[RMDB]
RNA sequence: GGGAACGACUCGAGUAGAGUCGAAAACCGUAGGACGAUUGAGAGGCAUCGAUCAUGGGUCACAGUGGGAUUCGAAAGAGUCCCAUCACAGCCCAUGGGAGCCUUUAGAUCGUCCUAAACGGAAAGAUAUGCAAUCCCUUCGGGGAUUGCAUAUCAAGAUUGACAUAUACUUCGGUAUAUGUCAAUCAAAAGAAACAACAACAACAAC
Reactivity to DMS in 0.01 (KOAc 150mM, MgCl2 10mM, bicine 150mM(pH8.5), 24C), signal-to-noise 2, nucleotides 027 to 156: c010c010g040u000a040g000g010a030c040g020a040u000u010g010a170g000a020g020g000c020a240u010c120g000a120u020c040a010u000g020g000g030u000c040a140c170a120g000u000g000g000g010a020u000u020c000g000a150a080a290g020a060g000u000c000c000c000a000u000c010a150c170a300g000c000c010c000a020u000g010g000g020a080g050c000c000u000u000u000a130g000a020u000c010g000u010c010c000u000a000a000a050c010g000g010a120a090a140g000a020u000a000u000g010c020a040a010u000c000c020c010u000u000c300g030g010g030g000a020u000u000g010c000a010u010a000u000c000a090a120
Reactivity to 2A3 in 0.01 (KOAc 150mM, MgCl2 10mM, bicine 150mM(pH8.5), 24C), signal-to-noise 3, nucleotides 027 to 156: c000c000g000u010a010g000g000a000c010g000a010u000u050g020a070g010a010g130g000c050a230u260c110g070a080u050c000a000u010g000g010g010u130c040a020c010a060g020u010g000g000g000a000u000u000c010g060a070a080a090g000a030g010u000c010c030c000a000u030c000a010c010a000g010c010c000c010a000u000g010g000g000a010g000c000c000u000u000u000a010g000a000u000c000g000u010c000c000u000a000a000a000c010g040g030a170a090a040g000a010u000a000u000g010c000a000a000u000c010c000c000u010u090c260g040g000g000g000a000u000u000g000c000a000u000a000u000c000a000a000